[RMDB]
RNA sequence: GGGAACGACUCGAGUAGAGUCGAAAAACCUUUGUGCGAUACGAAGAACAAACGGGAGUGCACUCCUCCCAUUGGGAGGAGAAUGCACUGUGAACGUUUGGGAGUAUCGCACUCUGGUAAAGAUGCGUCCUUUGGCUUCGGCCAAAGGACGCAUCAAGACUAAGGUUAUGUUCGCAUAACCUUAGUCAAAAGAAACAACAACAACAAC
Reactivity to DMS in 0.01 (KOAc 150mM, MgCl2 10mM, bicine 150mM(pH8.5), 24C), signal-to-noise 1, nucleotides 027 to 156: a050c000c000u000u000u000g010u000g020c000g040a020u000a010c000g000a220a160g020a190a200c000a030a000a020c000g000g010g000a040g050u010g010c000a300c010u000c000c000u010c000c000c030a210u000u000g050g020g010a040g030g000a030g000a010a030u000g010c000a010c010u000g030u010g000a140a160c000g000u000u000u010g000g020g010a300g020u000a000u000c010g030c000a010c000u000c030u000g020g010u000a050a170a130g020a050u000g020c010g000u000c000c000u000u020u000g030g030c000u000u020c300g050g000c000c020a000a000a050g000g020a010c000g050c000a000u000c000a030a120
Reactivity to 2A3 in 0.01 (KOAc 150mM, MgCl2 10mM, bicine 150mM(pH8.5), 24C), signal-to-noise 3, nucleotides 027 to 156: a000c010c000u000u000u010g000u000g020c010g000a000u010a000c040g120a210a120g060a180a000c010a010a010a010c010g020g030g040a020g000u000g010c000a010c020u000c000c000u020c000c000c080a250u160u300g010g000g000a000g000g010a010g000a010a040u040g000c000a000c000u000g050u020g020a160a020c000g000u000u000u000g000g020g010a050g010u000a000u000c000g000c000a000c000u000c000u010g000g020u060a080a090a080g010a000u000g000c010g010u020c020c000u030u000u000g020g020c020u120u120c300g100g000c000c010a010a000a010g000g030a000c000g000c000a000u000c000a000a000

Conditions: 150 mM KOAc, 10 mM MgCl2 and 150 mM bicine (pH 8.5), 24 C. Chemical mapping of a 207-nucleotide RNA with DMS and 2A3. For 2A3 the reverse transcriptase was SuperScript II with manganese. The 2A3 profile rests on 4,160 reads. It was measured as part of the RMDB library RNAMAK.